[RMDB]
RNA sequence: GGGAACGACUCGAGUAGAGUCGAAAAGCGUACUACCAGUGGUAAGCGAGGUACACGUAACCUAUCCCAAAUAGGAUAGGGAGAAGUGUACUACCCACCGCUUACGUAACAUCUGGUAUCGCAAAGAAUGAUUCUACAGUUCGCUGUAGAAUCAUUCGGUCAGGAAGUCGUUCGCGACUUCCUGACCAAAAGAAACAACAACAACAAC
Reactivity to 2A3 in 0.01 (KOAc 150mM, MgCl2 10mM, bicine 150mM(pH8.5), 24C), signal-to-noise 2, nucleotides 027 to 156: g020c010g040u080a100c030u010a020c010c000a000g000u050g040g010u020a000a000g000c010g000a010g020g020u000a000c030a000c000g040u010a000a040c000c000u000a000u000c030c000c040a240a300a030u300a090g000g000a000u000a000g000g040g000a000g020a000a000g000u030g000u000a000c000u000a000c000c010c000a020c000c000g000c000u010u000a000c000g070u050a020a090c060a240u100c000u010g010g010u010a030u300c010g000c030a060a000a000g010a000a000u000g000a000u010u030c000u000a000c000a000g020u000u050c180g090c160u010g010u000a000g000a000a000u000c000a000u000u000c000